[RMDB]
RNA sequence: GGGAACGACUCGAGUAGAGUCGAAAAAAAAAUAACCAACAAUGUGAUCUUGCUUGCGGAGGCAAAAUUUGCACAGUAUAAUAUCUGCAAGUAGUGCUAUUGUUGGAAAGAAAACUGUGCUAAAAAAGUGUAAGUAAAUCUUCGGAUUUACUUACACAAAAGAAACAACAACAACAAC
Reactivity to 2A3 in 0.01 (KOAc 150mM, MgCl2 10mM, bicine 150mM(pH8.5), 24C), signal-to-noise 2, nucleotides 027 to 126: a000a000a000a000a000u120a010a040c010c000a000a010c000a000a000u180g080u050g300a300u150c050u030u010g000c000u000u010g000c020g010g010a010g040g030c070a010a030a070a170u070u080u050g000c000a000c000a000g010u020a040u030a300a130u160a090u010c010u000g000c000a000a000g010u010a020g180u020g030c000u010a000u010u000g000u010u010g000g000a000a090a000g010a000a080a010a000c010u010g000u010g000c020u030a010a020a000a050a050a100
Reactivity to DMS in 0.01 (KOAc 150mM, MgCl2 10mM, bicine 150mM(pH8.5), 24C), signal-to-noise 2, nucleotides 027 to 126: a000a020a060a030a050u030a080a150c010c000a000a020c000a010a000u000g000u010g000a220u000c050u000u000g000c000u000u000g000c000g020g010a040g020g010c230a080a020a060a070u000u010u000g030c000a000c000a020g000u010a050u010a070a030u010a040u010c010u000g000c000a010a000g000u000a000g010u010g030c010u000a000u000u000g000u000u000g000g000a030a090a040g000a060a050a090a020c010u000g020u000g020c010u010a000a080a070a120a080a090